[RMDB]
This 177-nucleotide RNA was probed chemically with DMS and 2A3. The 2A3 profile rests on 2,776 reads. For DMS the reverse transcriptase was MarathonRT. Conditions: 150 mM KOAc, 10 mM MgCl2 and 150 mM bicine (pH 8.5), 24 C. It was measured as part of the RMDB library OK2TRN. For 2A3 the reverse transcriptase was SuperScript II with manganese.

RNA sequence: GGGAACGACUCGAGUAGAGUCGAAAAGUGGUACUGAAAUUACGCUACAUUUGCGUGAAGGCGAAGACGAGUAUCUGGAUGACUGGCGUCUACGUUCUGUUAUCAGCAAAUACUCAGAUCAUAUUGACACUACUCACUCGUUCGCGAGUGAGUAGUGAAAAGAAACAACAACAACAAC
Reactivity to DMS in 0.01 (KOAc 150mM, MgCl2 10mM, bicine 150mM(pH8.5), 24C), signal-to-noise 4, nucleotides 027 to 126: g010u000g020g010u010a090c060u000g000a100a090a090u000u000a040c050g010c030u000a120c230a150u000u010u000g010c060g040u000g010a060a100g000g020c040g000a080a040g010a110c100g010a040g020u000a040u000c070u010g010g010a060u000g010a040c040u000g030g000c010g020u000c130u020a080c050g020u010u010c030u000g020u000u000a050u000c020a080g010c140a040a020a040u000a010c050u000c000a070g010a090u000c050a070u000a120u000u000g000a300
Reactivity to 2A3 in 0.01 (KOAc 150mM, MgCl2 10mM, bicine 150mM(pH8.5), 24C), signal-to-noise 3, nucleotides 027 to 126: g070u050g030g030u120a120c020u080g070a000a070a130u130u040a050c030g000c060u050a030c050a300u070u100u120g000c020g030u010g050a070a010g050g020c050g040a030a020g040a020c010g000a010g010u010a020u100c060u070g090g080a060u060g020a020c030u020g020g000c000g010u030c090u100a130c030g040u100u200c020u040g040u030u040a020u000c020a010g100c010a030a030a010u030a020c010u000c000a020g020a090u060c020a070u060a120u130u160g030a000